An RNA of 177 nucleotides, treated with 2A3 and DMS and read out base by base.
Conditions: 150 mM KOAc, 10 mM MgCl2 and 150 mM bicine (pH 8.5), 24 C.
The DMS profile rests on 2,856 reads.
DMS adducts were read by reverse transcription with MarathonRT.
2A3 adducts were read by reverse transcription with SuperScript II with manganese.
RNA sequence: GGGAACGACUCGAGUAGAGUCGAAAAAGUCAAAGGACAAAACCACGAGGCACGGAAGCUCGUACGAUCCGUGACGAAGCGAACACUCAGAGUCCGAUAUCGGACACCCUUGCUGAGAUCGCUAACGCAUCUUAACUUCCUUCGGGAAGUUAAGAUGAAAAGAAACAACAACAACAAC
Reactivity to 2A3 in 0.01 (KOAc 150mM, MgCl2 10mM, bicine 150mM(pH8.5), 24C), signal-to-noise 5, nucleotides 027 to 126: a000g040u040c070a160a130a200g220g010a040c050a040a120a020a020c030c010a050c050g030a090g080g010c060a020c070g040g030a030a080g060c020u040c150g090u130a050c090g020a100u000c000c000g020u030g020a020c030g040a010a000g000c020g010a070a020c140a030c110u010c010a000g020a010g050u000c010c010g060a060u120a160u300c040g000g000a000c010a040c080c020c020u070u190g010c010u010g000a010g010a020u000c010g010c010u020a060a020c090g000
Reactivity to DMS in 0.01 (KOAc 150mM, MgCl2 10mM, bicine 150mM(pH8.5), 24C), signal-to-noise 4, nucleotides 027 to 126: a140g000u000c050a070a110a160g030g040a010c030a070a070a100a170c090c030a140c160g020a110g020g010c040a030c060g000g000a060a120g000c050u000c150g000u000a070c110g010a060u000c010c030g010u000g030a060c110g010a140a020g040c030g010a010a100c230a080c030u010c000a020g010a140g030u010c010c000g010a230u000a120u000c020g000g010a020c020a170c100c100c110u000u010g000c000u000g000a020g010a050u000c010g010c000u010a040a110c180g000